The data come from the RNA Mapping Database (RMDB), libraries RFM100 and RFMREP. An RNA of 177 nucleotides, treated with DMS and 2A3 and read out base by base. Reactivities are given for positions 27 through 126. For 2A3 the reverse transcriptase was SuperScript II with manganese. The reactions ran in a buffer of 150 mM KOAc, 10 mM MgCl2 and 150 mM bicine (pH 8.5), at 24 C.
RNA sequence: GGGAACGACUCGAGUAGAGUCGAAAAGUAGAGCUAAGGGACACUGUGGAAACGGCAGGUCAGGCCUGAUCGGAAACAGCAGCAGGUGAGUCCGCCUUAUGUGAAGGAUCGGCUGAAACACGAGGAAGACGGAGAAGUACUUCGGUACUUCUCCGUCAAAAGAAACAACAACAACAAC
Reactivity to DMS in 0.01 (KOAc 150mM, MgCl2 10mM, bicine 150mM(pH8.5), 24C), signal-to-noise 2, nucleotides 027 to 126: g000u050a120g000a130g040c010u010a060a050g000g010g000a030c050a130c020u000g000u030g000g000a050a020a040c080g000g030c150a150g010g000u020c120a120g030g000c140c070u000g000a010u030c070g030g000a160a100a010c090a040g000c110a300g070c020a060g010g010u000g000a110g000u000c010c000g030c020c030u000u000a090u020g020u000g000a090a100g010g030a090u000c100g000g010c000u050g040a180a060a060c050a110c110g010a050g040g010a080a060
Reactivity to 2A3 in 0.01 (KOAc 150mM, MgCl2 10mM, bicine 150mM(pH8.5), 24C), signal-to-noise 2, nucleotides 027 to 126: g060u050a010g030a000g010c020u100a020a100g070g000g000a000c020a030c100u030g040u070g090g000a080a020a000c000g030g000c000a040g010g000u110c020a030g140g140c000c000u040g040a050u070c020g120g080a100a060a100c080a040g080c000a000g000c020a010g030g070u070g160a060g050u020c050c050g000c000c000u150u110a190u180g050u010g050a080a050g030g000a020u080c000g020g000c000u000g000a020a010a010c020a020c040g000a040g000g030a100a010